This 207-nucleotide RNA was probed chemically with DMS and 2A3. For 2A3 the reverse transcriptase was SuperScript II with manganese. For 2A3, 794 sequencing reads were counted. DMS adducts were read by reverse transcription with MarathonRT. For DMS, 1,610 sequencing reads were counted.

[RMDB]
RNA sequence: GGGAACGACUCGAGUAGAGUCGAAAAUUAUCUUGUUUAAUUGAGGGUACAGGAUUAGCGGUUAAUGAAUUAGGCAUGCAGGAUAAUAUGGUUUUAACACCUAAGAUAAUGUUUUACGCUCGUAAAUACGCAUGUGAUAGAGAAGAAAAAGAAAUAAACUACCCUGCUAUUUCGAUAGCAGGGUAGUAAAAGAAACAACAACAACAAC
Reactivity to DMS in 0.01 (KOAc 150mM, MgCl2 10mM, bicine 150mM(pH8.5), 24C), signal-to-noise 1, nucleotides 027 to 156: u010u000a080u000c080u000u010g020u000u000u000a100a160u010u000g030a120g030g000g020u010a130c020a040g030g020a070u020u000a070g060c040g030g000u000u000a020a070u030g000a050a090u030u010a050g010g000c050a120u000g000c020a120g010g000a090u000a020a100u000a120u050g020g000u000u000u000u000a100a060c100a010c000c030u010a080a150g020a020u000a050a070u000g000u000u000u000u010a100c090g020c060u000c120g000u030a070a130a170u000a000c110g110c010a050u000g000u000g050a030u020a030g020a180g030a070a150g020a050a080a060a060a150g000a090a030a040u020a090a170
Reactivity to 2A3 in 0.01 (KOAc 150mM, MgCl2 10mM, bicine 150mM(pH8.5), 24C), signal-to-noise 1, nucleotides 027 to 156: u100u050a030u040c000u070u090g070u050u150u100a170a100u200u160g030a120g000g000g040u120a060c000a010g030g030a040u020u050a030g060c040g010g010u060u090a080a040u080g050a020a080u020u090a040g000g000c000a030u020g000c020a040g000g030a000u080a070a000u050a090u000g000g040u010u030u070u000a070a020c090a030c030c010u010a040a000g040a080u050a040a010u030g040u020u020u000u060a010c000g070c040u020c040g040u010a060a030a020u090a050c010g000c060a010u070g000u000g100a110u090a100g050a040g010a120a010g030a140a040a000a000a030g080a030a140a020u300a130a120